The record gives the reactivity of an RNA of 177 nucleotides to DMS and 2A3. For 2A3 the reverse transcriptase was SuperScript II with manganese. For 2A3, 613 sequencing reads were counted. DMS adducts were read by reverse transcription with MarathonRT.
[RMDB]
RNA sequence: GGGAACGACUCGAGUAGAGUCGAAAAUGAAAGCAAUUGGAGGGCAAGUCUGGUGCCAGCAGCCGCGGUAAUACCAGCUCCAAUAGCGUAUAUUAUUGAUGUUGCAGUUAAAAAGUUCGUAGUUUGAAGGAUAAAUUACUUUCGAGUAAUUUAUCCUAAAAGAAACAACAACAACAAC
Reactivity to DMS in 0.01 (KOAc 150mM, MgCl2 10mM, bicine 150mM(pH8.5), 24C), signal-to-noise 4, nucleotides 027 to 126: u020g000a070a190a190g010c040a110a040u010u000g000g000a000g010g000g000c130a060a090g020u070c010u000g040g000u010g000c010c010a080g040c010a110g030c180c140g000c030g000g000u000a100a080u040a160c050c010a040g000c020u010c020c050a020a040u000a050g010c020g000u020a050u030a100u000u010a080u030u000g010a060u010g010u000u000g000c070a130g020u000u020a030a060a110a060a110g020u010u010c130g020u010a070g010u020u010u000g010a140
Reactivity to 2A3 in 0.01 (KOAc 150mM, MgCl2 10mM, bicine 150mM(pH8.5), 24C), signal-to-noise 2, nucleotides 027 to 126: u100g050a000a070a000g000c010a020a010u050u000g010g060a040g000g030g000c040a020a090g070u010c000u040g040g050u070g020c030c040a040g000c000a010g030c070c170g020c000g000g000u090a060a000u000a110c000c000a010g020c000u000c000c000a010a010u050a080g000c000g070u020a040u010a010u170u050a040u040u160g130a130u060g010u040u050g070c080a010g010u200u260a090a140a000a000a000g020u040u110c040g010u020a020g060u020u030u120g080a040